[RMDB]
RNA sequence: GGGAACGACUCGAGUAGAGUCGAAAAGAUAUGGAGAUACGCUUCUUUUGACGCCAUUCGGAAACGAAUGUGCGAUAAGAAGGUAUCUCCUAAGUCAAAGGUCCCAGGAGUUCGCUCCUGGGACCAACCUUGUACAAUACUUCGGUAUUGUACAAGGAAAAGAAACAACAACAACAAC
Reactivity to 2A3 in 0.01 (KOAc 150mM, MgCl2 10mM, bicine 150mM(pH8.5), 24C), signal-to-noise 3, nucleotides 027 to 126: g010a000u040a030u090g000g000a010g010a000u010a020c160g080c300u010u000c010u030u200u150u180g080a040c010g000c000c000a010u010u000c000g010g000a030a010a010c010g000a020a010u050g140u300g030c000g000a010u110a130a040g000a000a010g000g000u010a000u000c010u000c000c000u000a000a000g000u000c020a110a080a110g000g000u000c000c000c000a000g020g000a010g010u180u300c300g020c190u000c000c000u000g000g000g000a000c000c000a000a000
Reactivity to DMS in 0.01 (KOAc 150mM, MgCl2 10mM, bicine 150mM(pH8.5), 24C), signal-to-noise 3, nucleotides 027 to 126: g000a030u000a270u010g000g000a020g010a010u000a000c000g020c000u000u000c000u010u000u010u000g000a260c050g000c000c010a020u000u000c000g020g010a060a070a080c000g010a010a010u000g000u030g040c000g020a060u000a020a010g010a010a010g010g000u000a000u000c000u000c000c000u000a010a050g010u000c020a080a140a170g000g010u000c000c000c000a000g000g010a010g010u010u010c260g010c000u010c000c000u000g000g000g000a010c000c000a010a010